Overview
An RNA of 177 nucleotides, treated with 2A3 and read out base by base.
RNA sequence: GGGAACGACUCGAGUAGAGUCGAAAAUGUGACCACUAGUCGCGCUCGUGCUAGCCGUGCAUGGGGUGUCACAGGUCAAAUCGCAAUCAAUCUCCGAUAAGUGAGACAUCAGCUGAGAAAAGCUAUCACGUGCCGGAGUCUUCGGACUCCGGCACGUAAAAGAAACAACAACAACAAC
Reactivity to 2A3 in 0.01 (KOAc 150mM, MgCl2 10mM, bicine 150mM(pH8.5), 24C), signal-to-noise 1, nucleotides 027 to 126: u140g000u000g000a090c000c000a130c150u090a150g120u070c150g000c000g030c030u100c050g040u000g050c070u050a100g000c080c030g160u210g000c000a000u080g000g030g000g000u080g100u180c000a000c000a030g090g000u000c050a010a010a000u030c050g020c050a010a020u050c000a000a130u000c060u000c000c000g020a100u080a130a070g070u100g050a010g050a000c000a060u000c070a000g000c000u000g000a000g120a060a160a000a000g000c000u000a000u080c050

For 2A3 the reverse transcriptase was SuperScript II with manganese. For 2A3, 432 sequencing reads were counted. The data come from the RNA Mapping Database (RMDB), library OK1LIB. The reactions ran in a buffer of 150 mM KOAc, 10 mM MgCl2 and 150 mM bicine (pH 8.5), at 24 C.